[RMDB]
RNA sequence: GGGAACGACUCGAGUAGAGUCGAAAAGUAGCGAAAGCUACCCAGAGAAAUGGGUAUCGAGAUGAGAGAAUUGAAAAGGCUUGUCUCAUGCAUUGAGCACACUUUUCUGUGCUGUAUCGACGAUACAGGGAUACGUAACGUUCGCGUUACGUAUCCCAAAAGAAACAACAACAACAAC
Reactivity to DMS in 0.01 (KOAc 150mM, MgCl2 10mM, bicine 150mM(pH8.5), 24C), signal-to-noise 2, nucleotides 027 to 126: g010u020a040g010c000g030a200a130a120g010c000u000a020c000c030c030a070g000a160g010a030a130a110u000g040g000g010u020a010u000c030g000a260g000a000u000g000a060g000a020g000a210a030u000u020g020a030a030a130a020g000g000c110u010u020g040u100c000u010c050a000u000g050c180a140u040u020g000a110g010c000a030c150a060c010u000u000u000u000c020u000g030u000g010c000u000g000u010a000u020c010g010a110c130g000a050u000a000c070a250
Reactivity to 2A3 in 0.01 (KOAc 150mM, MgCl2 10mM, bicine 150mM(pH8.5), 24C), signal-to-noise 3, nucleotides 027 to 126: g050u020a000g000c010g030a090a070a000g000c000u010a000c000c000c010a040g050a010g030a050a170a060u100g000g030g050u030a040u040c070g010a010g000a040u030g010a020g000a000g040a140a100u030u050g030a030a010a010a010g090g010c010u070u100g020u070c000u000c010a000u100g120c050a070u100u180g050a000g010c040a000c000a010c040u040u000u010u050c060u050g090u060g010c020u010g040u090a030u030c060g190a230c080g000a080u020a000c030a010
The record gives the reactivity of an RNA of 177 nucleotides to DMS and 2A3. It was measured as part of the RMDB library OK1LIB. DMS adducts were read by reverse transcription with MarathonRT. The RNA was probed in 150 mM KOAc, 10 mM MgCl2 and 150 mM bicine (pH 8.5) at 24 C. 2A3 adducts were read by reverse transcription with SuperScript II with manganese.